Annotation:
This 177-nucleotide RNA was probed chemically with DMS and 2A3. The reactions ran in a buffer of 150 mM KOAc, 10 mM MgCl2 and 150 mM bicine (pH 8.5), at 24 C.
RNA sequence: GGGAACGACUCGAGUAGAGUCGAAAAGAUAUGGAGCAUGUGUAGACAUGUCCUAAGGGUCGGAAACGACCCGAAGGACAACAGCUACACCGCUGCUCCUAAGUCAAAAGCCAGGUUCGCCUGGCAAUCCUUUGAUGAUCUUCGGAUCAUCAAAGGAAAAAGAAACAACAACAACAAC
Reactivity to DMS in 0.01 (KOAc 150mM, MgCl2 10mM, bicine 150mM(pH8.5), 24C), signal-to-noise 1, nucleotides 027 to 126: g070a020u000a300u060g010g000a020g000c020a000u000g000u010g010u000a040g000a060c080a300u000g020u050c000c000u000a030a300g000g000g000u000c000g040g000a100a130a190c000g000a030c000c000c000g000a100a000g000g000a020c000a010a040c300a260g000c010u000a030c000a020c010c010g000c000u000g000c000u010c000c000u000a000a030g020u030c040a080a120a110a190g000c000c000a020g000g000u000u000c300g030c000c000u000g000g000c010a010a000
Reactivity to 2A3 in 0.01 (KOAc 150mM, MgCl2 10mM, bicine 150mM(pH8.5), 24C), signal-to-noise 1, nucleotides 027 to 126: g020a010u030a050u300g010g000a000g050c000a070u180g020u000g010u010a000g070a150c070a080u150g030u040c000c000u020a030a070g020g000g000u000c000g000g120a130a040a110c020g020a030c030c010c010g000a000a010g000g000a000c000a040a070c050a010g040c010u000a020c010a000c000c000g010c000u000g000c010u000c000c000u020a050a000g050u010c020a070a080a060a030g000c020c010a000g000g080u050u130c300g090c020c010u000g020g010c010a000a030